This 177-nucleotide RNA was probed chemically with 2A3 and DMS. DMS adducts were read by reverse transcription with MarathonRT. Conditions: 150 mM KOAc, 10 mM MgCl2 and 150 mM bicine (pH 8.5), 24 C.

[RMDB]
RNA sequence: GGGAACGACUCGAGUAGAGUCGAAAACUCGCAGGGGAGCCCCCGCGAUCGGUAGCCGACCGUUACACUCCACACCAGGAAUCAAGUCUUUCCGGAUGCCUCGGGACUUCCGAGCGCAUUCAGUCAGAUCCAAGUUAUCUUUCGAGAUAACUUGGAUAAAAGAAACAACAACAACAAC
Reactivity to 2A3 in 0.01 (KOAc 150mM, MgCl2 10mM, bicine 150mM(pH8.5), 24C), signal-to-noise 9, nucleotides 027 to 126: c010u000c010g010c040a060g010g020g010g020a060g020c020c010c000c000c010g020c010g030a070u070c030g030g040u050a030g040c020c020g040a030c000c000g000u030u030a030c040a010c040u010c010c010a040c010a030c030c010a010g040g090a020a050u080c050a080a020g070u010c010u010u040u010c020c010g000g010a000u000g010c000c000u010c000g030g010g300a300c110u300u030c040c010g000a000g000c100g000c010a000u010u010c010a000g040u020c030a010g010
Reactivity to DMS in 0.01 (KOAc 150mM, MgCl2 10mM, bicine 150mM(pH8.5), 24C), signal-to-noise 6, nucleotides 027 to 126: c030u000c000g010c080a100g010g010g010g010a150g010c060c030c010c030c030g010c070g000a040u000c040g010g010u010a090g020c050c020g010a080c070c030g000u010u010a110c100a090c030u000c020c020a050c040a100c060c060a070g000g000a090a120u010c090a060a070g010u000c020u010u020u000c030c050g000g010a000u000g000c000c000u000c000g000g000g010a140c170u030u050c000c010g000a020g000c130g000c000a000u000u000c030a070g000u020c110a070g020